[RMDB]
RNA sequence: GGGAACGACUCGAGUAGAGUCGAAAAGGAGACUGAGGUAGGAGGAUUGCUUAAGCCUGAGAGGUCGAGGUUGCGGUGAGCUGUGAUCGUGCCACUGUACUCCAGCCUGGGUGACACAGCCUGACCCUGCUUCAGAAAAACAAAGACAAAAAAGAACAGAACCAUCGAGGUUCGCCUCGAUGGUUCUAAAAGAAACAACAACAACAAC
Reactivity to 2A3 in 0.01 (KOAc 150mM, MgCl2 10mM, bicine 150mM(pH8.5), 24C), signal-to-noise 1, nucleotides 027 to 156: g050g020a060g030a010c010u000g010a000g000g000u000a000g000g010a020g020g060a070u000u160g050c040u100u060a060a000g020c000c040u140g070a050g020a040g160g010u150c130g030a120g000g000u080u030g060c000g000g040u030g040a090g040c030u080g050u100g200a080u160c080g000u030g040c010c010a000c000u000g000u070a020c040u000c020c020a010g030c010c000u020g020g010g000u000g020a020c050a010c020a140g030c020c040u070g070a130c000c000c000u000g020c000u000u000c000a000g080a130a060a000a000a000c020a000a060a000g100a010c090a010a150a000a000a000a000g120a090a050c000